[RMDB]
RNA sequence: GGGAACGACUCGAGUAGAGUCGAAAACUCACGAGUGAAAGUUAAGGGAUUUGCCAUUUGCGUAACGUUCGGAUGGUUGGGCAAUUUUAUUUUAACGUUUCUAUGCCCUGUGAUGAUUGAAAGAUUAGUAGCCUAGGAAAUUCGUUUCCUAGGCUACAAAAGAAACAACAACAACAAC
Reactivity to 2A3 in 0.01 (KOAc 150mM, MgCl2 10mM, bicine 150mM(pH8.5), 24C), signal-to-noise 2, nucleotides 027 to 126: c010u020c030a010c070g050a030g030u130g040a130a080a040g010u120u090a070a050g140g040g060a140u120u000u080g030c000c020a070u070u100u170g050c010g020u020a060a110c030g040u130u080c020g040g010a020u050g050g000u120u070g000g000g010c030a020a030u000u100u010u050a110u050u080u010u070a080a010c000g000u000u090u000c020u040a040u130g030c000c000c000u050g050u020g020a010u030g000a020u080u140g080a160a100a070g090a080u070u080a030
Reactivity to DMS in 0.01 (KOAc 150mM, MgCl2 10mM, bicine 150mM(pH8.5), 24C), signal-to-noise 3, nucleotides 027 to 126: c050u010c030a110c080g000a070g010u000g010a050a040a070g010u000u000a050a070g010g020g010a060u010u010u000g010c030c000a080u010u010u000g010c100g010u020a060a080c130g010u000u000c090g010g010a070u000g020g020u010u010g020g000g020c030a040a030u000u000u010u000a090u030u020u010u000a040a110c060g010u000u000u000c030u000a080u010g000c010c030c010u000g010u010g000a040u000g000a080u000u010g010a070a080a100g010a110u000u000a110